[RMDB]
RNA sequence: GGGAACGACUCGAGUAGAGUCGAAAAUGGUGUUAAGUGGAAUAAGUGGAAAAAUAUACAUAUAUGUACAGGGGGCUACAUAUAUGUAUAUGCCCCCUAGUCUCAGUAUAAGUAGGUAUAAGGUGGAGCGUAGGAGUAAUUUCGAUUACUCCUACGCAAAAGAAACAACAACAACAAC
Reactivity to DMS in 0.01 (KOAc 150mM, MgCl2 10mM, bicine 150mM(pH8.5), 24C), signal-to-noise 1, nucleotides 027 to 126: u000g040g000u010g010u000u000a030a170g000u000g000g000a070a070u000a110a110g000u020g000g000a010a020a060a120a030u020a020u000a030c000a000u000a030u000a020u000g010u000a050c050a100g000g000g000g030g070c080u000a020c030a030u010a060u000a060u030g000u030a000u000a010u010g000c040c010c000c020c020u000a010g020u000c050u010c050a070g000u020a030u000a000a120g000u010a030g000g000u010a040u000a050a140g020g020u010g000g030a200
Reactivity to 2A3 in 0.01 (KOAc 150mM, MgCl2 10mM, bicine 150mM(pH8.5), 24C), signal-to-noise 1, nucleotides 027 to 126: u070g010g010u070g020u050u080a130a060g050u030g080g110a140a120u150a190a040g030u230g110g020a020a090a000a000a000u060a000u000a010c000a000u080a000u000a000u030g000u000a030c130a120g050g000g010g000g040c000u010a010c020a020u070a000u030a000u020g000u000a000u000a000u020g020c000c000c050c010c000u010a000g040u060c000u010c000a040g050u030a040u020a050a040g020u080a040g110g000u000a150u010a100a050g000g070u060g030g000a020
Annotation
An RNA of 177 nucleotides, treated with DMS and 2A3 and read out base by base. For DMS, 2,441 sequencing reads were counted.